This 177-nucleotide RNA was probed chemically with DMS and 2A3. For DMS, 7,945 sequencing reads were counted. For 2A3, 10,631 sequencing reads were counted. The reactions ran in a buffer of 150 mM KOAc, 10 mM MgCl2 and 150 mM bicine (pH 8.5), at 24 C.
[RMDB]
RNA sequence: GGGAACGACUCGAGUAGAGUCGAAAAGAUAUGGACCACACAGACAUGCCUGACGGUCGGAAACGACCGCCAGGCAACAGCUGUCGUGGUCCUAAGUCAAAGCACGUGAGGUUCGCCUCACGUGCAAGAACAACUACAUGUUCGCAUGUAGUUGUUCAAAAGAAACAACAACAACAAC
Reactivity to DMS in 0.01 (KOAc 150mM, MgCl2 10mM, bicine 150mM(pH8.5), 24C), signal-to-noise 4, nucleotides 027 to 126: g010a020u000a030u010g010g000a020c000c000a010c000a030c000a010g020a010c060a300u010g000c000c000u000g020a010c000g010g010u000c000g010g000a000a010a040c000g020a010c000c010g000c010c000a000g020g010c000a000a000c150a090g020c000u000g010u000c260g030u000g000g010u000c000c000u000a000a060g000u000c010a150a130a170g010c000a000c000g010u000g010a030g000g010u000u020c300g020c000c000u000c000a000c000g020u010g010c000a020a020
Reactivity to 2A3 in 0.01 (KOAc 150mM, MgCl2 10mM, bicine 150mM(pH8.5), 24C), signal-to-noise 2, nucleotides 027 to 126: g000a010u010a000u050g000g000a000c000c000a000c000a010c000a020g050a010c170a250u300g010c020c010u010g000a010c000g000g020u000c000g000g000a030a010a000c010g000a000c010c000g000c010c000a000g000g000c020a010a010c030a010g000c010u000g010u070c090g010u010g010g000u000c000c000u000a000a000g000u000c010a000a140a010g000c000a000c010g010u000g010a010g060g020u110u210c300g130c060c010u000c000a010c000g000u000g000c000a000a000